This 177-nucleotide RNA was probed chemically with DMS and 2A3. The reactions ran in a buffer of 150 mM KOAc, 10 mM MgCl2 and 150 mM bicine (pH 8.5), at 24 C. For 2A3 the reverse transcriptase was SuperScript II with manganese. For DMS, 5,196 sequencing reads were counted. Source: RMDB library TTRINS, as collected in RNAgym. DMS adducts were read by reverse transcription with MarathonRT.
RNA sequence: GGGAACGACUCGAGUAGAGUCGAAAAGAUAUGGAAACGGAAAUUAAGCUUGGAUUUAUAGGUCGUACGCUGUUCGGAAACGAACAGUUGAAACCUAUUGUCAGCUUAAAUUUCCGUUUCCUAAGUCCUUAAACCAAAGGUUCGCCUUUGGUUUAAGAAAAGAAACAACAACAACAAC
Reactivity to DMS in 0.01 (KOAc 150mM, MgCl2 10mM, bicine 150mM(pH8.5), 24C), signal-to-noise 4, nucleotides 027 to 126: g000a140u010a260u000g020g010a010a020a000c010g000g010a000a010a010u010u000a040a010g020c010u010u000g020g030a020u000u010u010a020u000a010g010g020u000c040g000u000a300c300g000c000u000g000u000u000c010g010g000a140a120a220c000g000a020a010c000a000g000u000u000g000a180a120a010c000c000u000a010u000u000g010u000c000a020g000c000u000u000a010a020a050u000u000u000c000c000g000u010u000u000c000c000u000a030a100g000u000c040
Reactivity to 2A3 in 0.01 (KOAc 150mM, MgCl2 10mM, bicine 150mM(pH8.5), 24C), signal-to-noise 2, nucleotides 027 to 126: g020a020u150a020u170g010g020a010a020a010c020g000g030a000a050a020u040u020a000a020g010c070u180u300g240g040a050u300u300u080a030u080a010g060g020u090c060g060u030a030c030g010c010u010g000u020u000c000g040g000a000a060a090c010g000a000a020c000a000g010u000u000g000a000a030a000c000c010u010a000u000u030g010u000c010a000g000c010u000u000a000a000a000u000u000u000c000c000g000u000u000u000c000c000u000a000a000g000u010c010